[RMDB]
RNA sequence: GGGAACGACUCGAGUAGAGUCGAAAAGUGCAGAUUGAAAUUCAUGGGAGCCUCUCCAUAAUGGAUGAACGCCGCGAUAGUCCGCGCAGUCGCGACGUAAACGCUCUGUUUUCCCGUUCAGGCCUCACGGGUAUAUGGUAUUCGUACCAUAUACCCGAAAAGAAACAACAACAACAAC
Reactivity to DMS in 0.01 (KOAc 150mM, MgCl2 10mM, bicine 150mM(pH8.5), 24C), signal-to-noise 4, nucleotides 027 to 126: g020u010g010c020a020g000a080u000u000g000a120a110a070u010u000c020a020u010g000g010g010a070g010c160c110u010c030u000c020c000a080u010a060a070u010g010g000a040u000g000a160a050c020g010c020c020g020c010g000a020u000a130g010u010c030c060g000c090g030c050a280g010u000c010g010c010g020a020c020g000u010a050a080a120c110g010c080u000c010u010g010u000u000u000u000c000c010c010g020u010u010c140a090g000g010c050c070u000c110a140
Reactivity to 2A3 in 0.01 (KOAc 150mM, MgCl2 10mM, bicine 150mM(pH8.5), 24C), signal-to-noise 2, nucleotides 027 to 126: g100u060g030c010a000g070a080u100u120g060a160a130a080u060u040c010a010u050g040g000g000a040g040c040c040u170c020u010c040c000a060u220a300a030u130g030g000a010u060g020a000a000c000g010c040c000g000c010g010a000u010a040g080u060c070c050g010c010g000c040a020g020u010c010g000c010g020a000c000g000u030a060a180a000c040g010c010u050c020u020g030u010u000u030u010c040c010c000g010u040u110c080a050g090g070c040c030u050c030a080